Source information:
Source: RMDB library OK2TRN, as collected in RNAgym. Chemical mapping of a 177-nucleotide RNA with 2A3 and DMS.
RNA sequence: GGGAACGACUCGAGUAGAGUCGAAAAGCUGCUCCUGCAGAAGGAAGACACUGUCCGCCGCCUGGUGCUGCCCGCUGUCCAGCUCGAGGACUCCGGCGAGUACUUGUGUGAAAUUGACGAUGAGUCGGUGAUGACACACGUUCGCGUGUGUCAUCACAAAAGAAACAACAACAACAAC
Reactivity to 2A3 in 0.01 (KOAc 150mM, MgCl2 10mM, bicine 150mM(pH8.5), 24C), signal-to-noise 1, nucleotides 027 to 126: g020c000u050g030c030u060c070c080u080g000c030a060g040a240a030g120g010a050a050g050a030c010a000c050u030g000u030c000c030g000c020c010g000c060c020u030g060g000u030g000c010u010g080c000c080c060g090c070u000g010u000c000c000a010g050c060u000c080g060a070g010g020a030c020u040c050c000g060g010c080g020a020g000u030a000c050u110u110g050u010g020u000g070a050a050a160u100u140g010a020c040g030a030u130g000a000g050u050c020g000
Reactivity to DMS in 0.01 (KOAc 150mM, MgCl2 10mM, bicine 150mM(pH8.5), 24C), signal-to-noise 2, nucleotides 027 to 126: g040c070u000g010c090u020c040c060u000g020c170a050g010a140a080g000g030a060a070g020a120c110a060c040u010g000u000c000c050g010c120c010g000c000c020u000g000g030u000g010c030u000g010c090c030c060g020c130u000g020u010c140c030a070g010c000u020c080g030a070g000g000a130c050u000c160c090g020g020c070g040a060g000u010a050c040u000u000g040u010g020u000g010a050a090a140u010u020g000a030c030g020a140u010g010a190g020u000c040g000

For DMS the reverse transcriptase was MarathonRT. DMS (dimethyl sulfate) methylates the pairing face of unpaired adenines and cytosines.